[RMDB]
RNA sequence: GGGAACGACUCGAGUAGAGUCGAAAAAAGCCUGCCAGAUGGAUGCAACUGCUUGCUAAACACCAGGCGCCAUUUUCGGCCGCGCCGAACUUCGCAUUCGAUUUGGCCGUCGCUAAAACUUCCGAAGCUUUACCCCAAGAUUCGUCUUGGGGUAAAGAAAAGAAACAACAACAACAAC
Reactivity to 2A3 in 0.01 (KOAc 150mM, MgCl2 10mM, bicine 150mM(pH8.5), 24C), signal-to-noise 7, nucleotides 027 to 126: a000a000g030c010c000u010g000c000c010a020g000a040u020g030g000a000u020g010c010a110a050c100u110g040c020u080u040g040c040u170a130a100a060c080a050c080c040a020g000g010c000g010c020c040a130u120u060u040u120c070g050g000c070c100g070c060g000c010c010g030a030a030c040u130u130c150g000c020a040u010u030c020g300a040u000u010u020g010g010c000c000g070u080c060g000c030u040a090a060a140a120c050u060u020c010c010g050a080a030g020
Reactivity to DMS in 0.01 (KOAc 150mM, MgCl2 10mM, bicine 150mM(pH8.5), 24C), signal-to-noise 5, nucleotides 027 to 126: a100a070g030c000c000u000g020c010c000a020g000a030u000g000g010a010u010g000c000a140a130c170u020g000c030u000u000g000c080u040a080a070a110c220a160c300c030a070g000g000c020g020c070c150a060u030u000u000u010c070g000g000c060c170g000c090g010c000c000g000a030a060c220u010u010c200g000c000a020u000u000c030g010a040u000u000u000g000g010c000c050g020u020c130g000c030u010a050a050a090a140c200u020u000c000c010g000a160a130g020